[RMDB]
RNA sequence: GGGAACGACUCGAGUAGAGUCGAAAAUAGGGAUAACAGGCUGAUCACGCCCAAGAGUUCAUAUCGACGGCGUGGUUUGGCACCUCGAUGUCGGCUCGUCGCAUCCUGGGGCUGGAGAAGGUCCCAAUCUAACGUUCCUCUUCGGAGGAACGUUAGAAAAAGAAACAACAACAACAAC
Reactivity to DMS in 0.01 (KOAc 150mM, MgCl2 10mM, bicine 150mM(pH8.5), 24C), signal-to-noise 3, nucleotides 027 to 126: u020a190g050g010g000a180u020a130a100c140a130g010g010c040u000g000a000u010c000a050c010g010c000c010c010a110a300g000a050g000u000u000c190a120u020a180u000c000g010a300c300g010g000c040g000u000g010g000u000u000u020g060g000c020a190c030c000u000c030g000a030u000g010u030c010g000g000c040u000c040g000u010c060g010c080a060u040c000c030u000g000g000g020g000c000u000g000g000a130g010a130a130g000g000u000c000c020c000a040a170
Reactivity to 2A3 in 0.01 (KOAc 150mM, MgCl2 10mM, bicine 150mM(pH8.5), 24C), signal-to-noise 4, nucleotides 027 to 126: u210a020g000g030g080a050u110a110a050c080a070g300g000c000u010g000a010u000c000a000c000g000c000c000c000a020a010g020a000g000u130u270c120a060u230a080u230c020g020a030c010g020g000c000g000u020g010g000u020u000u000g020g010c000a030c000c000u030c020g090a020u050g040u050c000g000g000c000u010c010g030u000c000g000c030a130u000c010c000u020g000g000g000g000c010u070g100g050a140g060a160a070g060g000u020c000c000c010a000a050
An RNA of 177 nucleotides, treated with DMS and 2A3 and read out base by base. For DMS the reverse transcriptase was MarathonRT. For DMS, 2,246 sequencing reads were counted. Conditions: 150 mM KOAc, 10 mM MgCl2 and 150 mM bicine (pH 8.5), 24 C. Reactivities are given for positions 27 through 126. The data come from the RNA Mapping Database (RMDB), library RFM100.